About this RNA
An RNA of 207 nucleotides, treated with 2A3 and DMS and read out base by base. 2A3 adducts were read by reverse transcription with SuperScript II with manganese.
[RMDB]
RNA sequence: GGGAACGACUCGAGUAGAGUCGAAAAUGCAAGUAGUGCUAUUGUUGGAAUCACCGUACCUAUUUAGGUUUACGCUCCAAGAUCGGUGGAUAGCAGCCCUAUCAAUAUCUAGGAGAACUGUGCUAUCAAAACGGUAUUGGCUUCGGCCAAUACCGAAUCAGAACUAAUUCUUCGGAAUUAGUUCUGAAAAAGAAACAACAACAACAAC
Reactivity to 2A3 in 0.01 (KOAc 150mM, MgCl2 10mM, bicine 150mM(pH8.5), 24C), signal-to-noise 5, nucleotides 027 to 156: u140g000c060a050a080g070u110a030g080u100g050c030u040a040u050u080g070u030u060g030g020a080a060u070c020a010c020c010g010u030a030c000c020u070a150u160u200u230a040g000g030u000u040u070a050c070g030c020u030c040c020a050a020g010a100u100c020g010g020u020g040g010a010u000a010g000c020a020g000c020c000c000u050a060u080c080a130a090u070a060u260c050u060a010g010g020a110g030a080a030c070u070g040u070g140c010u030a020u090c050a010a060a030a070c010g000g000u000a000u000u010g000g000c000u030u050c170g090g000c000c000a000a000u000a000c010c000g000a000a000
Reactivity to DMS in 0.01 (KOAc 150mM, MgCl2 10mM, bicine 150mM(pH8.5), 24C), signal-to-noise 3, nucleotides 027 to 156: u000g020c040a080a160g020u000a130g020u000g010c020u000a050u000u010g020u000u010g030g020a100a110u000c000a070c040c000g000u000a060c010c020u000a200u000u000u010a050g020g010u000u000u000a050c050g020c040u000c030c020a070a070g000a020u000c050g000g000u010g030g020a050u000a020g000c010a150g000c110c050c000u010a180u000c050a080a120u010a110u000c130u000a090g000g000a080g000a080a070c070u000g020u000g010c040u000a040u000c040a050a050a060a210c010g000g020u000a000u000u000g010g010c010u000u010c300g040g010c000c000a010a010u000a010c000c000g010a000a050

The reactions ran in a buffer of 150 mM KOAc, 10 mM MgCl2 and 150 mM bicine (pH 8.5), at 24 C. DMS adducts were read by reverse transcription with MarathonRT. For DMS, 7,465 sequencing reads were counted. The 2A3 profile rests on 3,924 reads. It was measured as part of the RMDB library M2RFPK.